[RMDB]
RNA sequence: GGGAACGACUCGAGUAGAGUCGAAAAAAAGAUAUGGAGAGUACCGCUACGCUUGGAUUUACAGGGAUAACACAUCGGAAACGAUGUGGAAGCCCUGUUGUCAGCGUAUGUACUCUCCUAAGUCAAAGCUUAAACUGAACUUCGGUUCAGUUUAAGCAAAAGAAACAACAACAACAAC
Reactivity to 2A3 in 0.01 (KOAc 150mM, MgCl2 10mM, bicine 150mM(pH8.5), 24C), signal-to-noise 1, nucleotides 027 to 126: a020a000a000g090a050u150a030u070g020g010a000g040a000g000u000a000c050c000g050c030u020a010c010g020c050u150u300g270g000a070u300u220u060a000c000a000g000g020g000a000u060a130a040c000a010c000a010u000c020g000g000a050a030a100c010g000a010u020g010u010g000g020a040a000g060c000c010c000u010g000u000u000g010u010c000a000g000c030g000u000a000u080g010u010a000c000u000c030u020c000c000u010a040a000g000u020c000a000a110a040
Reactivity to DMS in 0.01 (KOAc 150mM, MgCl2 10mM, bicine 150mM(pH8.5), 24C), signal-to-noise 2, nucleotides 027 to 126: a040a070a140g000a070u000a300u010g010g000a030g020a030g010u000a000c000c020g000c020u020a000c010g010c020u000u000g020g000a030u010u000u000a020c000a000g000g000g000a030u000a200a300c000a000c000a000u000c010g000g000a190a100a260c000g010a010u000g000u000g010g010a070a190g000c000c010c000u000g010u000u000g000u000c000a020g010c010g000u000a000u010g000u000a000c000u000c000u000c000c000u000a010a060g000u000c020a130a130a180